[RMDB]
RNA sequence: GGGAACGACUCGAGUAGAGUCGAAAAAUCUUCCGGUAGUCCUGUCGCAGAUGACUUUCGCCCAUUUAUGGAACCACACUUUCUUUAAUUUGAAUUCUAUGUGGUAGGACGAGAGUCAUCUGUGACACACUAACUAUCCCUUCGGGGAUAGUUAGUGAAAAGAAACAACAACAACAAC
Reactivity to 2A3 in 0.01 (KOAc 150mM, MgCl2 10mM, bicine 150mM(pH8.5), 24C), signal-to-noise 9, nucleotides 027 to 126: a000u060c060u110u030c050c010g080g060u120a080g070u060c030c030u020g000u000c000g000c000a000g000a000u000g000a000c000u000u000u000c010g010c000c000c020a080u100u210u160a240u200g170g050a050a020c010c000a000c010a020c010u030u080u020c030u040u190u160a300a300u190u090u100g050a030a030u100u040c090u140a140u160g000u000g000g020u010a060g030g010a010c000g000a000g000a000g000u000c000a000u000c000u000g000u000g000a000c000a000
Reactivity to DMS in 0.01 (KOAc 150mM, MgCl2 10mM, bicine 150mM(pH8.5), 24C), signal-to-noise 3, nucleotides 027 to 126: a090u020c070u010u030c030c040g020g000u010a060g010u010c050c060u020g010u000c010g010c010a010g010a010u000g000a000c000u000u020u000c010g000c040c000c010a210u020u020u030a160u030g020g010a150a060c020c010a000c000a140c140u000u010u000c010u000u000u010a080a130u030u000u000g000a020a010u010u000c200u020a110u010g040u000g000g000u010a110g000g010a020c010g000a000g000a000g000u010c000a000u010c010u000g000u000g000a000c000a050